[RMDB]
RNA sequence: GGGAACGACUCGAGUAGAGUCGAAAAGAUAUGGAUGUAGGUAGGGUUCGCUUUAGGAGCCUGAACUCGGAAACGAGUUACAGGCGCGAAACUAAAGAACUACGAACCCUACCUACAUCCUAAGUCACUGCAAAUAAUACUUCGGUAUUAUUUGCAGAAAAGAAACAACAACAACAAC
Reactivity to DMS in 0.01 (KOAc 150mM, MgCl2 10mM, bicine 150mM(pH8.5), 24C), signal-to-noise 2, nucleotides 027 to 126: g040a040u000a300u010g000g000a000u000g000u000a000g000g010u000a010g030g010g020u010u000c000g030c010u000u000u000a020g010g010a240g000c000c000u000g000a060a000c010u000c000g000g000a140a110a180c000g000a010g010u000u000a100c020a010g000g010c000g010c220g020a090a060a180c010u000a010a010a030g000a170a030c190u010a300c020g010a000a000c000c000c000u000a010c000c000u000a000c000a000u010c000c000u010a010a030g020u010c030a300